The record gives the reactivity of an RNA of 207 nucleotides to DMS and 2A3. The reactions ran in a buffer of 150 mM KOAc, 10 mM MgCl2 and 150 mM bicine (pH 8.5), at 24 C. Reactivities are given for positions 27 through 156. The data come from the RNA Mapping Database (RMDB), library OK3TST.
RNA sequence: GGGAACGACUCGAGUAGAGUCGAAAAGUAUAGCAUGACUGGCGAUGCGUAUACGAUGAAUCAGCCAGUAAAGAAUCCGUUGUGCGAAAGCACUUCGGUAAUGCAUAAUCGGUUCGAGUACAGCCCGCUACGAGAACCGUUGUUAGUACGGGCCAGAAUCCAUAAUGCCAUUCGUGGCAUUAUGGAUAAAAGAAACAACAACAACAAC
Reactivity to DMS in 0.01 (KOAc 150mM, MgCl2 10mM, bicine 150mM(pH8.5), 24C), signal-to-noise 1, nucleotides 027 to 156: g050u030a060u000a070g000c010a030u010g050a120c000u030g030g020c010g000a040u000g040c040g050u010a110u000a060c190g000a160u000g010a100a090u000c070a150g060c060c000a050g000u000a000a070a090g000a140a120u000c010c000g020u000u000g080u000g050c030g060a220a110a300g050c010a000c030u000u000c000g030g000u000a010a040u000g020c070a150u000a150a100u010c030g020g000u030u000c000g000a300g000u000a040c030a080g000c010c020c000g000c120u000a030c060g000a300g000a010a040c010c030g120u000u020g000u000u010a070g000u000a120c060g010g000g000c000c000a170g020a160
Reactivity to 2A3 in 0.01 (KOAc 150mM, MgCl2 10mM, bicine 150mM(pH8.5), 24C), signal-to-noise 1, nucleotides 027 to 156: g040u020a000u060a290g020c000a000u040g010a100c020u010g000g000c000g000a000u060g030c070g110u090a080u050a150c150g080a120u160g060a100a020u040c000a010g000c000c010a010g000u040a060a060a030g030a020a000u000c000c000g000u010u000g000u000g030c000g050a090a010a010g050c000a000c000u000u010c020g030g000u000a010a010u060g000c030a080u060a210a150u200c060g000g000u010u000c000g000a000g000u000a070c020a050g000c000c000c010g000c050u000a000c030g030a030g000a010a000c000c000g000u000u010g020u000u000a150g020u020a050c020g070g030g000c010c010a060g060a070